The record gives the reactivity of an RNA of 177 nucleotides to DMS and 2A3. 2A3 adducts were read by reverse transcription with SuperScript II with manganese. For DMS the reverse transcriptase was MarathonRT.
RNA sequence: GGGAACGACUCGAGUAGAGUCGAAAAGAAAAGAGCGUAAUCGCGUCUUGACGUGAGUGAGGCUAGACUGUAGACUAUCCCAAGUGGGAUAGUAUAGCUCACAAUACGCUGAUCUACAGUCAAAAGAGCAUAAUAUCGCAUUCGUGCGAUAUUAUGCAAAAGAAACAACAACAACAAC
Reactivity to DMS in 0.01 (KOAc 150mM, MgCl2 10mM, bicine 150mM(pH8.5), 24C), signal-to-noise 4, nucleotides 027 to 126: g000a080a040a040a100g000a030g010c000g000u000a040a300u020c010g000c000g000u010c080u010u000g000a040c010g020u000g010a020g000u010g010a030g010g010c100u000a100g010a010c000u000g030u000a000g000a060c000u000a010u000c000c010c000a300a200g050u080g000g000g000a000u000a000g010u000a030u010a020g010c000u000c020a040c030a120a110u020a000c000g030c000u000g010a100u000c000u000a010c000a010g000u010c010a140a070a060a090g000a160
Reactivity to 2A3 in 0.01 (KOAc 150mM, MgCl2 10mM, bicine 150mM(pH8.5), 24C), signal-to-noise 8, nucleotides 027 to 126: g180a010a090a010a010g040a000g000c000g000u010a010a040u040c010g000c010g020u010c060u130u230g110a030c010g010u020g020a030g000u020g000a020g070g050c020u040a060g000a020c000u000g010u000a000g000a010c000u000a000u020c010c000c040a140a190g240u300g070g000g000a000u000a010g000u000a020u020a000g000c000u010c000a010c010a010a050u030a030c010g000c000u010g020a010u010c000u000a010c000a000g000u010c000a040a040a020a010g110a020
The reactions ran in a buffer of 150 mM KOAc, 10 mM MgCl2 and 150 mM bicine (pH 8.5), at 24 C.